RNA sequence: GGGAACGACUCGAGUAGAGUCGAAAAAAGAUCCGACGGUACAACAUUCCAAAGAUCAUAUUGUAGAAUACCGUUACUGGCGUACGAUCCUACAUAUGUAUCAUAUGGUCCUUCCUUCUCAGCUAGUUUACAACUCGCCUCUAAUGCACCGUAAUAACAUAAUGAAGUUUUUCGAAACUUCAUUAUGAAAAGAAACAACAACAACAAC
Reactivity to 2A3 in 0.01 (KOAc 150mM, MgCl2 10mM, bicine 150mM(pH8.5), 24C), signal-to-noise 9, nucleotides 027 to 156: a000a000g050a040u030c030c010g040a020c050g040g020u080a050c040a150a030c020a200u140u090c030c010a090a080a040g010a010u020c020a020u020a030u030u150g010u010a010g020a100a040u060a160c060c020g020u050u060a080c050u100g160g020c090g030u050a020c040g030a030u030c010c000u010a010c020a010u030a000u040g160u110a030u040c020a030u040a090u190g030g010u030c000c010u030u050c010c000u080u050c070u010c030a020g010c020u050a030g050u050u120u120a100c070a120a040c020u030c040g020c020c010u060c030u090a080a060u090g020c030a020c030c020g030u030a060a050u090a150a020
Reactivity to DMS in 0.01 (KOAc 150mM, MgCl2 10mM, bicine 150mM(pH8.5), 24C), signal-to-noise 4, nucleotides 027 to 156: a060a090g010a080u000c040c030g010a110c050g020g020u020a050c040a060a120c050a160u000u010c020c020a120a230a110g000a050u000c020a040u000a040u000u010g020u010a040g000a060a040u010a030c040c000g010u000u000a100c220u000g000g010c040g020u000a060c020g000a050u000c000c010u000a040c010a050u000a020u000g000u010a070u000c050a110u000a100u010g010g020u000c030c020u000u000c020c030u000u000c030u000c040a090g030c040u000a080g020u000u000u000a070c110a060a100c040u000c040g020c030c020u000c040u000a050a090u000g020c000a060c010c010g000u000a040a070u000a070a170
Structure probing data (2A3 and DMS) for a 207-nucleotide construct. DMS adducts were read by reverse transcription with MarathonRT. It was measured as part of the RMDB library OK3TST. The reactions ran in a buffer of 150 mM KOAc, 10 mM MgCl2 and 150 mM bicine (pH 8.5), at 24 C.